[RMDB]
RNA sequence: GGGAACGACUCGAGUAGAGUCGAAAAGAAUUGGUAUGUAAGCUACUUCUUCCAGUAGCUGCGUCAUAACAUCAAGGUUAUGCAUACUGAGCCGAAGCUCAGCGUCGGUCCUCCAAGGAAGACCAAAUACAGCUCAGCCCGUUCGCGGGCUGAGCAACCUUACUAUAGCCUUCGGGCUAUAGUAAGGAAAAGAAACAACAACAACAAC
Reactivity to DMS in 0.01 (KOAc 150mM, MgCl2 10mM, bicine 150mM(pH8.5), 24C), signal-to-noise 1, nucleotides 027 to 156: g030a080a090u010u000g000g070u000a060u000g160u010a300a300g020c010u000a000c020u000u010c020u010u000c020c030a300g050u000a030g000c020u000g000c000g000u020c000a000u000a010a020c040a300u020c200a150a080g000g020u000u000a000u000g030c020a080u000a020c020u010g000a110g020c010c040g020a080a060g010c000u010c160a060g020c000g000u010c020g000g010u000c020c010u000c010c100a120a140g020g010a060a010g010a150c060c000a060a080a070u010a060c080a080g030c010u000c000a000g040c020c000c010g030u000u010c300g030c010g010g020g120c000u010g000a010g040c000a010a000
Reactivity to 2A3 in 0.01 (KOAc 150mM, MgCl2 10mM, bicine 150mM(pH8.5), 24C), signal-to-noise 1, nucleotides 027 to 156: g080a000a060u030u020g000g000u010a000u000g000u010a010a000g010c000u000a000c000u100u120c010u030u000c010c010a000g010u000a000g010c010u000g000c010g000u030c000a010u000a010a000c000a100u250c240a140a040g300g000u000u000a000u000g020c010a000u000a010c000u000g010a000g010c000c000g020a030a010g010c040u110c300a060g030c040g060u020c010g000g010u000c000c030u070c050c040a070a010g010g000a000a000g000a010c020c070a030a050a030u270a150c060a040g000c010u030c000a000g000c000c000c020g040u080u070c130g020c010g120g000g000c000u000g000a000g000c010a000a000